[RMDB]
RNA sequence: GGGAACGACUCGAGUAGAGUCGAAAACAUCUUAAAGCGAUUGAGAACGUGGCCUGAAUGAGGAUGGGAGUCUCUUGAAGGCCUGCCCACAGGUGGGAGGCUCAGCAGUUGGGAAGGACCCCACCCCUAUCUUAUGUGUUUUCGAACACAUAAGAUAAAAAGAAACAACAACAACAAC
Reactivity to 2A3 in 0.01 (KOAc 150mM, MgCl2 10mM, bicine 150mM(pH8.5), 24C), signal-to-noise 8, nucleotides 027 to 126: c010a040u050c030u100u130a130a100a040g080c040g110a120u070u150g050a060g020a120a050c070g040u060g050g020c010c010u050g070a110a070u110g020a050g070g030a030u040g030g050g030a100g040u000c020u000c000u040u040g090a060a020g030g000c010c000u040g050c000c010c000a090c050a050g110g100u080g040g020g010a030g030g000c010u010c060a050g000c030a080g050u150u090g020g010g020a020a050g060g010a030c000c000c000c000a020c000c000c000c000
Reactivity to DMS in 0.01 (KOAc 150mM, MgCl2 10mM, bicine 150mM(pH8.5), 24C), signal-to-noise 9, nucleotides 027 to 126: c090a080u010c040u000u000a060a100a130g010c100g010a110u000u010g000a080g010a080a120c110g010u000g010g020c020c010u000g010a130a070u000g010a050g020g010a060u000g010g010g010a140g010u000c020u000c030u000u000g010a210a100g010g000c010c010u000g010c030c010c030a110c140a100g000g030u010g010g000g000a070g010g000c020u000c050a060g010c080a070g010u000u000g010g000g000a070a080g010g000a160c040c000c000c020a150c030c010c030c060
Structure probing data (2A3 and DMS) for a 177-nucleotide construct. The 2A3 profile rests on 16,053 reads. 2A3 adducts were read by reverse transcription with SuperScript II with manganese. DMS adducts were read by reverse transcription with MarathonRT. It was measured as part of the RMDB library OK2TST. Reactivities are rounded to 0.1 and cut off at 0 and 3. The RNA was probed in 150 mM KOAc, 10 mM MgCl2 and 150 mM bicine (pH 8.5) at 24 C.